[RMDB]
RNA sequence: GGGAACGACUCGAGUAGAGUCGAAAACAUUCCGGAAGCCAUUUUGAAACUACAGCCCAGACACAUUAUCAUUUUUUAAAACUAUACCAUAUAUUUCAGUAUGCAUACUUAUUUCAAGGGUGUUUUGGAGGCGGUGCCUGCCUGGAACCCAGGCACAUCCCAUAAUUACCUUCGGGUAAUUAUGGGAAAAAGAAACAACAACAACAAC
Reactivity to 2A3 in 0.01 (KOAc 150mM, MgCl2 10mM, bicine 150mM(pH8.5), 24C), signal-to-noise 1, nucleotides 027 to 156: c000a060u160u120c000c010g020g090a070a020g000c040c000a040u000u010u120u230g070a080a080a010c020u050a040c020a000g000c030c000c000a000g050a000c050a000c000a070u000u280a040u130c040a060u060u040u050u120u090u220a060a040a000a020c040u070a090u040a150c020c010a020u040a020u020a060u240u110u050c000a000g050u040a010u090g020c040a000u150a170c000u110u070a040u150u170u050c030a030a040g000g070g020u080g010u000u060u030u060g070g000a010g010g040c010g030g020u010g010c000c030u030g000c000c000u000g010g010a010a110c000c010c010a000g000g000c000a000c000a020
Reactivity to DMS in 0.01 (KOAc 150mM, MgCl2 10mM, bicine 150mM(pH8.5), 24C), signal-to-noise 1, nucleotides 027 to 156: c030a190u000u010c020c010g030g000a040a100g020c010c010a090u040u040u000u010g000a120a070a100c040u000a050c050a100g000c020c030c030a140g010a180c030a110c040a060u010u000a090u010c020a020u030u000u030u000u000u000a030a080a050a050c030u010a100u010a110c010c010a090u000a080u000a080u000u010u020c030a090g020u000a100u000g010c050a070u010a060c090u010u010a050u000u000u000c050a070a120g000g000g000u010g010u000u000u000u000g000g010a110g000g020c040g000g020u020g080c020c030u000g050c010c010u000g000g000a090a070c140c160c000a020g000g030c010a050c030a150